RNA sequence: GGGAACGACUCGAGUAGAGUCGAAAACUUCCAACCACACCCACAGAGUCUUGGUAGAAGAUACGCAGUCCCUUGUAAGUGAAAAACUUGCCUGAAGACUUCCACGAGUGAAGAUCAGGUGACAGCUGAGUGUAUGGGAUGUGCAGGUACGCAGCAACGCUGCGUAAUACUUCGGUAUUACGCAGCGAAAAGAAACAACAACAACAAC
Reactivity to 2A3 in 0.01 (KOAc 150mM, MgCl2 10mM, bicine 150mM(pH8.5), 24C), signal-to-noise 2, nucleotides 027 to 156: c020u100u020c010c010a040a070c040c010a030c010a010c080c030c010a040c040a060g050a030g040u020c040u180u100g030g010u120a060g040a150a010g030a040u060a060c040g000c050a010g000u050c010c000c000u040u070g050u080a060a050g010u020g130a170a060a050a000a000c030u050u040g010c030c000u000g030a050a030g120a130c000u020u000c010c010a090c250g150a110g090u300g050a010a000g020a040u000c020a000g000g040u000g010a040c050a020g010c000u050g030a020g020u070g040u050a130u080g050g000g040a100u060g060u030g080c020a010g100g000u020a000c070g020c040a040g050c010a050a080
Reactivity to DMS in 0.01 (KOAc 150mM, MgCl2 10mM, bicine 150mM(pH8.5), 24C), signal-to-noise 2, nucleotides 027 to 156: c040u010u030c000c020a110a140c050c040a080c050a060c010c010c060a140c100a110g010a150g030u000c010u000u000g010g000u000a080g030a090a070g020a160u000a080c060g000c040a160g000u000c010c000c000u010u000g000u000a070a080g030u000g000a080a040a070a140a060c050u000u000g010c000c010u000g030a100a140g010a140c020u010u000c000c010a300c160g050a270g000u020g010a030a040g020a210u000c020a090g030g000u000g010a060c080a070g000c040u000g000a100g020u000g030u000a070u010g030g020g000a120u000g020u000g000c020a060g000g040u000a050c030g010c050a070g040c000a120a190

Structure probing data (2A3 and DMS) for a 207-nucleotide construct. 2A3 adducts were read by reverse transcription with SuperScript II with manganese.